[RMDB]
RNA sequence: GGGAACGACUCGAGUAGAGUCGAAAAUCUUUGGUAUGGACCGGGGUCCUGUUGGGUGGCUGGUAGGGCUGGUGUCACAGCUGAUGUCCCUCCAGGCUCCAGUGGCCUGGCCCGGCGACCGCCUCACCGUUCCUUACUCUUUCGAGAGUAAGGAACGAAAAGAAACAACAACAACAAC
Reactivity to DMS in 0.01 (KOAc 150mM, MgCl2 10mM, bicine 150mM(pH8.5), 24C), signal-to-noise 2, nucleotides 027 to 126: u000c030u000u020u010g050g010u000a060u010g020g020a140c080c040g000g020g000g010u000c090c020u020g000u000u000g020g000g000u000g010g030c000u010g030g020u000a100g020g030g010c030u000g020g020u010g030u000c210a060c130a190g010c040u020g000a140u030g020u020c000c010c000u020c070c010a200g010g010c010u010c080c100a100g020u010g010g020c110c030u000g010g000c050c010c020g010g010c050g000a050c020c020g020c030c020u000c120a090c160
Reactivity to 2A3 in 0.01 (KOAc 150mM, MgCl2 10mM, bicine 150mM(pH8.5), 24C), signal-to-noise 1, nucleotides 027 to 126: u000c010u060u070u160g000g030u130a140u260g040g080a090c020c020g040g000g000g050u040c020c010u040g080u080u080g000g000g050u070g120g020c030u050g000g090u140a040g030g010g000c020u000g020g040u090g050u090c030a020c010a090g000c020u070g030a230u170g110u160c000c000c000u020c000c020a090g030g000c010u040c010c000a030g050u030g010g040c030c050u030g080g000c000c000c050g020g000c000g050a020c010c010g010c020c000u010c010a060c000
Conditions: 150 mM KOAc, 10 mM MgCl2 and 150 mM bicine (pH 8.5), 24 C. Structure probing data (DMS and 2A3) for a 177-nucleotide construct. The data come from the RNA Mapping Database (RMDB), library OK2TST. As a SHAPE reagent, 2A3 marks flexible, mostly unpaired nucleotides at the ribose 2'-OH. 2A3 adducts were read by reverse transcription with SuperScript II with manganese.